[RMDB]
Conditions: 150 mM KOAc, 10 mM MgCl2 and 150 mM bicine (pH 8.5), 24 C.
Structure probing data (DMS and 2A3) for a 177-nucleotide construct.
Values cover nucleotides 27 to 126.
Source: RMDB library OK2TRN, as collected in RNAgym.
RNA sequence: GGGAACGACUCGAGUAGAGUCGAAAAAGCUUCGUACUUUGUUAUGAUGCUCACCAUAUCGUCUAACAAACUAAUUGAUAGUUUGCCUAUAGAUUUGAUGUUUAAUUAAGUUAGGCAUGCUCACCUACAUGUAGUUACAGUUCGCUGUAACUACAUGAAAAGAAACAACAACAACAAC
Reactivity to DMS in 0.01 (KOAc 150mM, MgCl2 10mM, bicine 150mM(pH8.5), 24C), signal-to-noise 8, nucleotides 027 to 126: a030g000c020u000u000c030g030u000a010c050u010u010u010g020u010u000a010u000g010a020u000g010c020u000c080a280c090c040a070u010a040u000c030g000u000c010u000a030a140c020a020a010a010c030u000a020a170u010u010g000a110u000a000g020u000u000u000g000c160c080u000a170u000a070g000a040u000u010u010g020a040u010g010u000u010u010a070a090u010u010a060a180g020u010u000a040g010g020c030a050u000g000c090u000c090a080c050c030u000a090
Reactivity to 2A3 in 0.01 (KOAc 150mM, MgCl2 10mM, bicine 150mM(pH8.5), 24C), signal-to-noise 5, nucleotides 027 to 126: a000g000c010u010u000c010g000u000a010c030u120u130u180g040u080u010a020u030g010a000u010g000c010u010c020a060c020c010a020u040a010u060c020g010u000c010u020a030a010c010a020a000a010c000u030a020a080u110u130g080a060u060a040g010u000u020u010g010c000c010u110a090u020a050g050a040u060u030u180g040a020u020g030u030u180u070a100a070u110u050a080a050g210u060u050a000g000g020c020a020u090g040c030u030c010a120c010c020u070a120